[RMDB]
RNA sequence: GGGAACGACUCGAGUAGAGUCGAAAAAGAUCGAUUACGAUCGAUCAAUGAUGCCCCUCACCCACCUCUGGAGAUCCCAGGUGGGCGAGGGAACGGAGCACGGGAUCACGAGCAGUACGCUGCUCGAAAAAGAACUAGACCUUCGGGUCUAGUUCAAGAUACGAAUGUAGUUCGCUACAUUCGUAUCAAAAGAAACAACAACAACAAC
Reactivity to DMS in 0.01 (KOAc 150mM, MgCl2 10mM, bicine 150mM(pH8.5), 24C), signal-to-noise 2, nucleotides 027 to 156: a090g000a000u000c000g010a000u010u000a140c180g000a090u000c000g010a060u000c020a300a080u000g020a100u000g010c060c030c010c000u000c020a020c010c010c000a020c010c010u000c020u000g000g010a140g000a070u010c130c000c020a030g000g040u000g000g000g050c000g010a050g000g010g020a000a030c050g020g000a130g000c120a070c100g000g050g000a090u020c010a240c020g000a040g050c000a040g030u010a090c280g100c030u000g000c000u000c020g010a010a050a080a120a040g000a020a010c000u000a000g010a020c000c020u000u010c300g060g000g020u000c000u000a000g000u000u000c000a040a050
Reactivity to 2A3 in 0.01 (KOAc 150mM, MgCl2 10mM, bicine 150mM(pH8.5), 24C), signal-to-noise 5, nucleotides 027 to 156: a010g010a000u010c000g000a000u060u070a080c150g030a020u010c000g000a000u000c010a010a100u190g110a070u160g060c010c000c010c000u000c000a020c000c010c000a000c010c000u050c070u120g080g020a090g010a100u070c020c000c000a000g000g020u000g010g000g000c000g000a000g000g000g010a040a020c060g060g060a070g070c100a060c150g020g010g020a030u060c060a020c090g000a000g000c010a000g010u080a040c260g010c110u010g000c000u000c000g020a010a010a000a000a000g000a000a000c000u000a000g010a000c020c010u040u090c230g060g000g000u000c000u000a000g000u000u000c000a000a000